This 207-nucleotide RNA was probed chemically with 2A3 and DMS. The DMS profile rests on 3,900 reads. The reactions ran in a buffer of 150 mM KOAc, 10 mM MgCl2 and 150 mM bicine (pH 8.5), at 24 C. For 2A3 the reverse transcriptase was SuperScript II with manganese.
[RMDB]
RNA sequence: GGGAACGACUCGAGUAGAGUCGAAAAGGGGCAACCUCUUCUCAGAAUCCAGCGUGAGGCGUAGGAGAGAGGGCCGCGGUGCUCUGGAGUAGAGGCUUCUGCUUCGAAACACCAUCGAUCGUCCCUGCUUCUUUUACCUUCCUGGCUCUUCGAGUGACUUCGUAUAUAGCUUCGGCUAUAUACGAAGAAAAGAAACAACAACAACAAC
Reactivity to 2A3 in 0.01 (KOAc 150mM, MgCl2 10mM, bicine 150mM(pH8.5), 24C), signal-to-noise 4, nucleotides 027 to 156: g050g020g020g030c060a100a130c020c020u060c050u130u050c030u000c010a040g080a070a080u300c030c020a050g050c110g150u270g090a010g010g050c120g040u040a020g020g010a010g020a010g010a010g000g000g000c000c000g000c000g000g030u000g010c000u000c000u010g000g000a000g010u010a000g010a000g010g000c000u180u100c170u300g000c000u000u000c030g010a010a010a010c010a020c110c010a010u000c010g020a280u020c010g000u000c010c000c010u020g070c020u100u040c000u020u030u030u080a060c000c000u010u020c000c000u000g010g000c010u020c020u020u020c020g010a000g010u060g050a040
Reactivity to DMS in 0.01 (KOAc 150mM, MgCl2 10mM, bicine 150mM(pH8.5), 24C), signal-to-noise 2, nucleotides 027 to 156: g010g000g040g000c050a050a150c040c030u000c020u000u010c020u000c060a130g000a200a140u010c040c040a090g020c160g020u000g050a050g020g000c030g030u010a110g030g000a070g000a070g000a040g010g010g000c010c000g030c130g010g000u000g020c030u000c000u000g030g010a210g040u040a140g010a090g040g000c130u000u000c180u000g010c000u010u000c000g040a190a110a110c010a030c120c000a100u000c010g010a140u010c010g000u000c000c000c000u000g000c020u000u000c000u010u000u000u010a120c080c000u000u000c090c000u000g020g000c070u000c030u000u000c030g010a100g000u000g020a180